Structure probing data (2A3 and DMS) for a 177-nucleotide construct. Conditions: 150 mM KOAc, 10 mM MgCl2 and 150 mM bicine (pH 8.5), 24 C. For DMS the reverse transcriptase was MarathonRT. It was measured as part of the RMDB library OK1LIB. The 2A3 profile rests on 5,065 reads.
RNA sequence: GGGAACGACUCGAGUAGAGUCGAAAAGCGCAGAAGCGCCGGCCAAAUACGUGCAAGCAGCCCGUUGUAAAACGUAGGGCGCGAUCGUUGUCCGGAUUUGUUGGGCGUAAAGAGCUUCGCAGGUGGCAAUAAUAUUUAAUUUCGAUUAAGUAUUAUUAAAAGAAACAACAACAACAAC
Reactivity to 2A3 in 0.01 (KOAc 150mM, MgCl2 10mM, bicine 150mM(pH8.5), 24C), signal-to-noise 3, nucleotides 027 to 126: g000c020g000c020a020g020a190a030g010c000g000c010c000g020g000c010c000a020a070a000u130a020c020g010u020g000c020a030a030g000c010a020g000c000c000c000g000u030u080g070u040a040a040a010a000c010g030u040a080g000g020g000c010g000c000g010a060u060c020g020u020u030g030u010c020c000g020g030a050u050u040u020g060u010u050g080g020g000c010g000u010a000a060a000g040a000g000c000u010u000c020g000c020a010g030g040u040g040g010c010
Reactivity to DMS in 0.01 (KOAc 150mM, MgCl2 10mM, bicine 150mM(pH8.5), 24C), signal-to-noise 9, nucleotides 027 to 126: g010c030g020c030a070g010a140a120g010c020g010c010c020g000g010c080c020a030a060a050u020a060c020g000u010g000c030a040a070g010c050a180g010c010c010c000g010u010u010g010u050a080a070a070a070c060g010u030a170g010g000g010c010g010c070g000a090u030c110g030u010u000g010u010c050c010g000g000a070u010u010u000g010u000u010g010g000g010c010g010u010a040a120a140g000a120g010c010u000u010c070g010c050a070g010g020u010g000g010c100
For DMS, 75,656 sequencing reads were counted.